RNA sequence: GGGAACGACUCGAGUAGAGUCGAAAAGAUAUGGAAUUCACCUUCUUCGAAGAACCAGUAUGGGAUAACCAUGUCGGAAACGACAUGGGAAGCCCAUACUGGGGAGAAGAAGUUGAAUUCCUAAGUCGUUCUAAACACAGUUCGCUGUGUUUAGAACAAAAGAAACAACAACAACAAC
Reactivity to DMS in 0.01 (KOAc 150mM, MgCl2 10mM, bicine 150mM(pH8.5), 24C), signal-to-noise 1, nucleotides 027 to 126: g000a130u000a300u010g010g000a010a020u000u010c000a000c080c000u020u010c010u000u000c000g000a150a200g000a210a270c010c000a000g010u010a000u000g010g000g020a010u000a220a300c000c000a000u010g010u000c010g040g000a070a100a120c000g010a070c010a010u000g000g010g030a090a150g000c000c000c000a000u010a010c000u000g000g010g010g010a100g010a000a010g000a000a010g000u000u000g010a020a000u010u000c000c000u000a020a110g010u000c100
Reactivity to 2A3 in 0.01 (KOAc 150mM, MgCl2 10mM, bicine 150mM(pH8.5), 24C), signal-to-noise 1, nucleotides 027 to 126: g050a070u220a120u300g000g000a010a020u010u010c000a000c010c010u010u000c010u000u020c080g300a300a100g010a040a050c010c000a000g000u000a010u010g000g000g000a020u020a040a060c000c000a010u000g010u030c000g060g000a010a080a070c040g010a020c000a020u000g000g000g030a010a020g010c030c000c010a010u000a000c010u010g000g010g040g000a010g010a000a000g000a000a030g000u000u010g000a000a000u000u020c000c000u010a060a000g020u030c060